[RMDB]
RNA sequence: GGGAACGACUCGAGUAGAGUCGAAAAAAUAGCGGGUCAAGGUACAACGCAGAGAGAUAGGCUCAUCCCAAGUUCUCUUCGGAGUACCAAGACUUCGGUACAGAACAGAUACCGACUCUUCAUAGAACAUCCUCUGUUCUUUCGAGAACAGAGGAUGAAAAGAAACAACAACAACAAC
Reactivity to DMS in 0.01 (KOAc 150mM, MgCl2 10mM, bicine 150mM(pH8.5), 24C), signal-to-noise 2, nucleotides 027 to 126: a030a080u010a060g000c130g000g040g000u000c000a050a300g010g030u000a000c000a010a260c030g030c100a050g010a010g010a080g000a150u010a120g030g000c070u000c300a140u010c150c010c000a100a100g020u000u000c000u050c010u000u000c010g000g000a300g000u000a010c000c000a010a270g000a020c040u010u020c060g030g010u000a030c160a160g010a170a080c180a090g000a060u010a040c060c000g010a050c260u000c020u000u000c030a060u000a120g010a070a240
Reactivity to 2A3 in 0.01 (KOAc 150mM, MgCl2 10mM, bicine 150mM(pH8.5), 24C), signal-to-noise 1, nucleotides 027 to 126: a010a000u140a050g050c120g000g040g020u000c010a010a000g010g020u000a010c000a010a000c020g030c050a020g000a010g000a000g020a100u080a180g110g020c040u080c070a080u080c010c000c010a010a010g040u010u000c010u000c000u000u010c000g000g030a000g010u000a000c030c000a010a010g000a010c000u050u030c010g000g010u020a040c000a080g270a190a020c000a060g070a120u040a020c010c030g050a060c020u040c010u150u150c090a150u070a190g110a070a020
Annotation
The record gives the reactivity of an RNA of 177 nucleotides to DMS and 2A3. The reactions ran in a buffer of 150 mM KOAc, 10 mM MgCl2 and 150 mM bicine (pH 8.5), at 24 C. For DMS the reverse transcriptase was MarathonRT. For 2A3 the reverse transcriptase was SuperScript II with manganese.